Chemical mapping of a 207-nucleotide RNA with DMS and 2A3.
The DMS profile rests on 6,725 reads.
It was measured as part of the RMDB library OK3TST.
For DMS the reverse transcriptase was MarathonRT.
For 2A3, 1,943 sequencing reads were counted.
2A3 adducts were read by reverse transcription with SuperScript II with manganese.
The reactions ran in a buffer of 150 mM KOAc, 10 mM MgCl2 and 150 mM bicine (pH 8.5), at 24 C.

RNA sequence: GGGAACGACUCGAGUAGAGUCGAAAAUAUACACACACAGUACAGUUACAUUGAUAUGUGUUUGCGUUAUAUAUGUAUGUAUUCACACAGAGCAUGCAUAUGCCUCAUGCAUAUUCAUGAGCUUUAAAUGUGCUUAUAGAUUAAGAUAUAAGGAUGAAAUCCGAUCCAUAUUCGUAUGGAUCGGAUUAAAAGAAACAACAACAACAAC
Reactivity to DMS in 0.01 (KOAc 150mM, MgCl2 10mM, bicine 150mM(pH8.5), 24C), signal-to-noise 3, nucleotides 027 to 156: u010a080u010a060c020a080c080a070c020a040c030a080g010u000a100c120a080g030u010u000a120c060a070u010u000g020a120u000a030u010g030u000g020u000u000u000g030c090g020u010u000a090u000a060u000a030u010g030u000a050u000g020u000a070u010u000c050a110c130a130c160a220g010a100g000c000a020u000g000c050a020u000a010u000g020c050c080u000c170a010u000g010c010a040u000a020u000u000c090a010u000g030a050g030c020u000u010u010a040a080a050u010g010u000g010c010u000u000a030u010a040g010a160u000u000a070a090g000a170u000a040u000a060a090g000g000a110u010g000a110
Reactivity to 2A3 in 0.01 (KOAc 150mM, MgCl2 10mM, bicine 150mM(pH8.5), 24C), signal-to-noise 3, nucleotides 027 to 156: u110a000u120a020c040a000c000a000c000a000c000a100g080u100a040c010a040g010u080u040a020c010a020u020u040g010a000u010a020u050g020u000g000u000u000u040g060c070g030u130u030a100u050a010u000a000u270g020u030a030u010g030u020a200u100u110c020a020c010a000c040a160g020a000g000c000a000u000g000c000a010u010a000u020g000c000c010u040c010a010u010g000c000a010u010a010u030u020c000a000u000g010a000g000c010u030u040u050a060a120a040u020g000u020g030c020u040u040a030u030a050g070a070u050u160a190a030g020a020u090a030u040a160a020g060g030a030u070g090a050